An RNA of 177 nucleotides, treated with 2A3 and DMS and read out base by base. Reactivities are given for positions 27 through 126. The RNA was probed in 150 mM KOAc, 10 mM MgCl2 and 150 mM bicine (pH 8.5) at 24 C. In probing experiments dimethyl sulfate is read out at A N1 and C N3, which are open when not base-paired. DMS adducts were read by reverse transcription with MarathonRT.
RNA sequence: GGGAACGACUCGAGUAGAGUCGAAAAUGUUCGGGGAUAUCGAUCUUGUUGAGGGCGAUCACGACAGGUUUUCCCGCCUGCUUGACCAGCUCGAUGAGCUCGUGCUCCUCUUCGCCAACGGAGCGGGCGAUUAGCAUGCUUUCGAGCAUGCUAAUCGAAAAGAAACAACAACAACAAC
Reactivity to 2A3 in 0.01 (KOAc 150mM, MgCl2 10mM, bicine 150mM(pH8.5), 24C), signal-to-noise 2, nucleotides 027 to 126: u280g010u120u110c080g000g000g000g030a020u030a050u130c010g010a010u020c010u040u060g060u050u040g060a080g040g100g080c200g080a070u040c040a000c070g250a130c010a030g030g000u000u040u060u050c020c010c020g000c000c010u030g020c010u030u020g010a040c000c030a080g070c020u010c020g030a050u070g000a010g010c030u000c030g030u040g050c010u010c010c000u010c000u050u090c060g030c020c000a120a110c100g090g000a100g010c030g000g030g020
Reactivity to DMS in 0.01 (KOAc 150mM, MgCl2 10mM, bicine 150mM(pH8.5), 24C), signal-to-noise 5, nucleotides 027 to 126: u020g010u000u010c080g020g010g000g000a060u010a100u000c020g020a020u000c020u000u000g020u000u010g000a090g010g010g010c070g010a050u000c010a050c090g010a110c010a020g000g010u000u000u000u000c010c000c010g000c000c000u000g000c020u000u000g010a040c020c020a250g010c020u000c040g000a040u000g000a040g010c070u010c040g010u000g010c150u010c020c010u000c050u000u000c060g010c040c060a130a120c130g010g000a070g010c050g020g000g000